The record gives the reactivity of an RNA of 177 nucleotides to DMS and 2A3. The reactions ran in a buffer of 150 mM KOAc, 10 mM MgCl2 and 150 mM bicine (pH 8.5), at 24 C. Reactivities are given for positions 27 through 126.

RNA sequence: GGGAACGACUCGAGUAGAGUCGAAAAGUGUGCAGCACGUGGCGCCGGGCGCUGGAAAAGGUGCCCAUGUAGCUGGGUUCCAUCUUCUUUUUCAAGGCGCGCUGCGUUUCGGCGGGGGUCAGGCCCGGUAGUAGACACGGUUCGCCGUGUCUACUACAAAAGAAACAACAACAACAAC
Reactivity to DMS in 0.01 (KOAc 150mM, MgCl2 10mM, bicine 150mM(pH8.5), 24C), signal-to-noise 1, nucleotides 027 to 126: g030u010g020u020g010c030a040g020c030a050c040g000u000g030g010c040g020c040c090g010g010g000c050g040c010u000g000g000a030a060a080a120g000g020u010g000c040c000c010a030u000g000u010a100g020c180u000g000g000g010u000u000c050c060a080u010c120u000u000c030u000u000u000u010u000c110a110a110g000g010c020g010c030g000c010u000g010c020g000u000u000u000c040g000g010c010g010g010g020g000g000u000c060a070g010g020c000c000c020g010
Reactivity to 2A3 in 0.01 (KOAc 150mM, MgCl2 10mM, bicine 150mM(pH8.5), 24C), signal-to-noise 1, nucleotides 027 to 126: g110u110g050u080g120c060a050g030c000a020c120g030u020g070g010c010g000c030c050g020g090g040c080g000c010u080g040g000a030a090a020a020g000g000u010g000c030c010c010a020u130g050u080a080g050c090u030g000g030g000u060u070c040c000a090u040c050u150u060c010u030u160u010u060u130c080a090a050g070g000c000g010c020g010c030u010g000c000g020u010u010u060c000g000g030c000g040g080g020g000g000u090c030a040g060g020c000c000c000g000